[RMDB]
Source information: An RNA of 177 nucleotides, treated with DMS and read out base by base.
RNA sequence: GGGAACGACUCGAGUAGAGUCGAAAAACGAGGCUCCUCCGAUUACGAUCGGAGGAGCCUCGAAAUGCGGUGCCCGGCAGCGAUUCAAUAACUGAUCGGGUGGCGGCAUUGCCUGAAAAUGAGGUAAUUUUAUGGUCAUUUUCGAAUGACCAUAAAAAAAAGAAACAACAACAACAAC
Reactivity to DMS in 0.01 (KOAc 150mM, MgCl2 10mM, bicine 150mM(pH8.5), 24C), signal-to-noise 1, nucleotides 027 to 126: a120c040g060a060g090g040c030u020c010c050u040c000c070g040a050u000u010a220c120g000a100u000c020g060g030a190g080g060a070g050c040c060u040c030g000a000a010a000u000g000c010g000g020u000g000c050c000c000g000g000c030a010g020c160g000a140u030u040c130a190a110u060a130a170c000u010g000a020u010c000g020g000g000u000g000g080c000g010g020c000a020u000u000g000c020c000u000g000a080a020a060a120u070g000a050g000g020u070a130a120

Conditions: 150 mM KOAc, 10 mM MgCl2 and 150 mM bicine (pH 8.5), 24 C. DMS adducts were read by reverse transcription with MarathonRT. Values cover nucleotides 27 to 126.